[RMDB]
RNA sequence: GGGAACGACUCGAGUAGAGUCGAAAAAGAGUCAGGAUCUCUGUUGUCCAGGCUGGUCUUGAACUCCCAAACUCAUGGUGGGAUUACAGGCAUGAGCCAUUGCGCAUGGCCAGGAAGGAGUGUUUUUAGGGAUGAUCUUUUCUAAGUAUGUGCAUAACAGCAUGGGGCUAUUCGUAGCCCCAUGCUGAAAAGAAACAACAACAACAAC
Reactivity to 2A3 in 0.01 (KOAc 150mM, MgCl2 10mM, bicine 150mM(pH8.5), 24C), signal-to-noise 1, nucleotides 027 to 156: a000g080a010g040u070c040a050g040g020a050u000c040u000c010u120g100u060u100g010u280c160c050a050g020g000c190u100g020g000u000c020u070u100g020a020a000c000u070c040c000c010a000a030a020c120u080c080a040u070g090g000u040g060g050g040a120u120u030a070c070a120g010g050c040a100u100g050a030g040c010c000a090u060u150g020c010g000c040a020u000g020g060c000c000a000g090g000a000a040g000g000a040g030u090g060u060u110u000u180u140a130g070g010g010a020u090g040a000u090c000u010u050u020u000c020u040a110a110g050u030a110u090g000u050g000c020a020u120a120a070